[RMDB]
Conditions: 150 mM KOAc, 10 mM MgCl2 and 150 mM bicine (pH 8.5), 24 C. An RNA of 177 nucleotides, treated with 2A3 and DMS and read out base by base.
RNA sequence: GGGAACGACUCGAGUAGAGUCGAAAACACCUGGGUGCCGUCGAUAUCUAAGACGCAAGCGUGGUGAAAGUAUUUGCAGGCGUCCAUGCCGAUGACAUAGUCGUAGGUCAUGUCUGACCUCCUAGCGUACAGUAGUGUAAUUCGUUACACUACUGUAAAAAGAAACAACAACAACAAC
Reactivity to 2A3 in 0.01 (KOAc 150mM, MgCl2 10mM, bicine 150mM(pH8.5), 24C), signal-to-noise 3, nucleotides 027 to 126: c040a030c010c020u060g140g000g040u050g080c110c010g050u030c010g000a040u040a070u190c070u090a110a040g030a000c020g000c010a020a000g110c040g080u130g020g010u040g080a110a060a000g080u070a130u050u120u160g050c030a040g020g010c000g010u000c050c010a010u050g010c000c010g050a040u060g010a000c030a110u170a060g030u050c030g040u030a030g010g000u040c010a020u100g070u060c100u040g000a050c000c000u090c030c010u080a040g030c050g060
Reactivity to DMS in 0.01 (KOAc 150mM, MgCl2 10mM, bicine 150mM(pH8.5), 24C), signal-to-noise 4, nucleotides 027 to 126: c110a100c030c010u000g020g020g020u000g010c080c050g000u010c020g000a140u010a080u010c200u010a130a150g010a020c010g010c030a050a050g020c040g030u000g000g010u010g000a130a100a140g010u010a050u010u000u010g020c050a080g010g010c300g010u000c030c060a050u000g000c060c000g020a060u010g010a000c040a100u000a080g010u010c080g010u000a040g010g000u000c030a040u010g010u000c150u010g010a030c030c020u000c020c020u000a090g030c130g010